Structure probing data (2A3 and DMS) for a 207-nucleotide construct. The data come from the RNA Mapping Database (RMDB), library RNAMAK. For 2A3, 3,923 sequencing reads were counted.

RNA sequence: GGGAACGACUCGAGUAGAGUCGAAAACAGAUCACUUCGGUGAUCUGAAAAAGCGUACUACUUAGCGACCAUGGGAGAUCACAUCCCAAAUAGGAUGUAGAUCGAAGAACAUGGAUAACGCUAAGUAUCGCAAAAAAGUCGUUGUUCGCAACGACAACUUGUCAUACUCGUUCGCGAGUAUGACAAGAAAAGAAACAACAACAACAAC
Reactivity to 2A3 in 0.01 (KOAc 150mM, MgCl2 10mM, bicine 150mM(pH8.5), 24C), signal-to-noise 3, nucleotides 027 to 156: c000a000g010a000u000c000a000c020u050u070c200g120g000u000g000a000u000c000u000g010a070a000a000a010a000g020c030g040u100a080c030u000a000c000u030u010a000g010c000g030a090c000c000a000u000g000g000g000a050g000a010u000c000a000c000a000u000c030c020c000a090a180a180u180a060g000g000a000u010g010u070a150g000a000u000c010g020a030a020g020a010a010c000a000u000g000g040a050u180a150a040c000g000c000u000a000a000g000u000a000u000c000g000c000a000a070a050a000a010a100g010u010c010g010u000u030g020u040u070c250g010c140a040a010c010g010a000c000a000a020
Reactivity to DMS in 0.01 (KOAc 150mM, MgCl2 10mM, bicine 150mM(pH8.5), 24C), signal-to-noise 2, nucleotides 027 to 156: c000a040g000a020u000c000a000c000u020u030c300g100g010u010g010a030u010c000u010g010a010a070a130a160a200g000c010g020u000a080c150u000a020c000u000u010a000g010c020g040a300c020c010a010u000g020g010g010a270g000a000u000c000a090c010a010u010c000c010c040a030a130a160u010a030g010g040a010u000g030u010a090g030a010u000c010g020a110a110g010a150a140c000a000u010g010g000a060u000a070a080c010g010c000u000a010a000g020u000a010u000c020g000c020a000a030a060a050a090a110g020u010c000g000u000u000g010u000u000c110g070c070a010a050c000g000a020c020a010a020